[RMDB]
RNA sequence: GGGAACGACUCGAGUAGAGUCGAAAAAUUAAGCCAUGCAAGUGUUAGUUCAGGUAACGAAACUGCGAAUAGCUCAUUAAUACGCUCAGAAUCUAUUUGGCGGCGACCAACAGGUCUUAAAUGGAUAGCAGCAGCAACUCUGGUGCUAAUACAUGCGGAGAUAACUGACGUUCGCGUCAGUUAUCUCAAAAGAAACAACAACAACAAC
Reactivity to 2A3 in 0.01 (KOAc 150mM, MgCl2 10mM, bicine 150mM(pH8.5), 24C), signal-to-noise 2, nucleotides 027 to 156: a000u180u110a030a000g040c040c010a060u120g010c000a150a090g030u010g020u020u020a000g000u010u040c000a000g000g080u060a080a060c060g060a090a000a000c020u030g000c060g060a070a110u060a020g000c000u000c010a000u030u030a100a060u060a100c070g000c040u120c240a030g060a180a150u140c100u140a110u130u080u200g010g000c000g040g000c010g020a000c000c010a010a150c060a180g020g000u020c000u050u120a110a030a040u050g030g050a070u080a100g000c000a030g000c010a000g010c020a030a030c090u020c010u160g110g070u170g080c000u020a000a000u050a010c010a010u010g010c060g050